The record gives the reactivity of an RNA of 207 nucleotides to DMS and 2A3. DMS adducts were read by reverse transcription with MarathonRT. Reactivities are given for positions 27 through 156. It was measured as part of the RMDB library OK3TST. For 2A3 the reverse transcriptase was SuperScript II with manganese. For 2A3, 1,688 sequencing reads were counted.
RNA sequence: GGGAACGACUCGAGUAGAGUCGAAAAGAAUGAUGGCUAAUAGAUGGUGAUCCUGAAUUGUGUCUUCUUAAAAAUGAGGGAAGCGGAGCUCAGAAAGACUUAGCAACUUACUCAUGGUUGUAGAGAUAACUAGAUAACUUGAAAACUAGACAGCAUACAAAAUCAUGGAUUUCGAUCCAUGAUUUUGAAAAGAAACAACAACAACAAC
Reactivity to DMS in 0.01 (KOAc 150mM, MgCl2 10mM, bicine 150mM(pH8.5), 24C), signal-to-noise 2, nucleotides 027 to 156: g000a130a060u000g010a080u000g010g000c030u000a080a110u000a090g010a100u010g010g020u010g010a070u000c040c020u000g010a060a080u010u010g040u010g020u000c030u010u000c000u000u020a000a060a080a100a060u010g010a060g010g000g020a060a100g010c050g010g020a090g020c030u000c080a120g000a180a090a150g000a060c000u000u000a160g020c040a000a070c030u000u000a110c000u010c010a110u000g010g000u000u000g020u000a160g010a060g000a130u000a010a120c060u000a070g010a130u010a070a060c090u000u000g010a080a060a080a080c050u010a060g000a090c020a030g000c030a060u010a150
Reactivity to 2A3 in 0.01 (KOAc 150mM, MgCl2 10mM, bicine 150mM(pH8.5), 24C), signal-to-noise 3, nucleotides 027 to 156: g070a030a030u120g040a030u030g000g000c030u060a040a020u020a190g050a050u040g010g010u020g010a040u070c000c010u010g080a080a060u070u060g030u000g020u030c010u020u000c010u100u120a130a180a090a070a080u040g010a030g000g010g050a020a000g010c000g040g070a020g000c000u000c070a010g060a140a100a010g040a060c000u040u010a010g020c010a030a080c020u030u060a030c010u040c060a030u120g050g010u000u010g000u030a030g010a010g020a040u070a090a030c020u010a030g020a060u070a090a060c010u020u100g050a110a060a000a010c000u010a010g030a060c030a040g000c020a010u050a120